Structure probing data (DMS and 2A3) for a 177-nucleotide construct. It was measured as part of the RMDB library OK1LIB. DMS adducts were read by reverse transcription with MarathonRT. The DMS profile rests on 45,829 reads. Conditions: 150 mM KOAc, 10 mM MgCl2 and 150 mM bicine (pH 8.5), 24 C.
[RMDB]
RNA sequence: GGGAACGACUCGAGUAGAGUCGAAAAGCUAGCCUGCGCACGAUCUGACUGCCGUGAAGUCUAGCCUGCGUCAGAACUAGUCUCCAUCAAUCAAAGCGCAGGGAUUGAGGUACGAGACUAGUACACAGUGUAUGGAGUUGUUCGCAGCUCUAUACACAAAAGAAACAACAACAACAAC
Reactivity to DMS in 0.01 (KOAc 150mM, MgCl2 10mM, bicine 150mM(pH8.5), 24C), signal-to-noise 9, nucleotides 027 to 126: g010c040u010a040g020c020c010u010g010c020g020c010a180c120g000a060u020c050u020g000a060c050u010g010c050c030g010u010g010a070a080g010u010c020u000a070g010c020c030u000g010c060g010u020c080a110g010a080a030c000u000a000g000u000c000u000c000c070a140u000c010a010a000u000c000a060a090a070g010c020g000c000a010g000g000g000a010u000u010g010a030g000g010u040a110c300g010a010g000a010c000u000a000g010u000a060c120a090c160a110
Reactivity to 2A3 in 0.01 (KOAc 150mM, MgCl2 10mM, bicine 150mM(pH8.5), 24C), signal-to-noise 9, nucleotides 027 to 126: g030c030u030a010g010c000c000u010g000c010g010c010a040c040g060a080u040c030u070g070a050c020u050g030c020c010g040u040g070a080a010g050u010c030u040a020g010c000c010u040g020c020g080u080c060a030g020a080a010c000u000a000g000u000c000u000c010c020a160u010c000a010a000u000c010a030a060a050g020c010g000c010a010g000g010g000a000u000u010g000a000g020g060u090a040c070g000a000g000a000c000u000a000g010u060a010c060a000c010a020